[RMDB]
RNA sequence: GGGAACGACUCGAGUAGAGUCGAAAAGAUAUGGAGAUGGUCCAGACAUGACGGUCGGAAACGAUACGUCAACAGCUGGCCAUCUCCUAAGUCAUGCGGACAUGCAUCCUUCGGGAUGCAUGUCCAACCUACUUGAGACCUUCGGGUCUCAAGUAGGAAAAGAAACAACAACAACAAC
Reactivity to DMS in 0.01 (KOAc 150mM, MgCl2 10mM, bicine 150mM(pH8.5), 24C), signal-to-noise 2, nucleotides 027 to 126: g000a060u000a300u000g010g010a010g000a010u000g000g000u000c020c020a010g010a100c030a190u010g020a010c010g010g000u000c010g000g000a090a070a180c000g000a010u000a090c000g000u000c000a010a080c220a210g000c010u010g000g000c000c000a010u000c000u000c000c000u000a000a020g010u000c030a100u010g030c150g000g000a000c020a000u000g000c010a010u000c000c000u000u020c200g000g000g000a030u010g000c010a020u000g000u000c040c000a010a040
Reactivity to 2A3 in 0.01 (KOAc 150mM, MgCl2 10mM, bicine 150mM(pH8.5), 24C), signal-to-noise 2, nucleotides 027 to 126: g000a000u020a030u050g010g000a000g030a010u020g000g030u300c260c120a020g060a210c030a060u030g000a010c000g020g020u010c000g000g000a020a020a010c000g000a000u300a300c000g010u020c010a010a020c140a020g140c000u020g010g000c010c000a000u020c000u010c000c000u000a000a000g010u000c000a030u200g160c200g050g010a000c000a010u010g000c020a000u020c020c000u100u270c300g030g010g000a000u000g000c010a000u010g000u000c000c020a010a000
The record gives the reactivity of an RNA of 177 nucleotides to DMS and 2A3. Conditions: 150 mM KOAc, 10 mM MgCl2 and 150 mM bicine (pH 8.5), 24 C. Values are in units of 0.01, from 0 to 300, in steps of 10.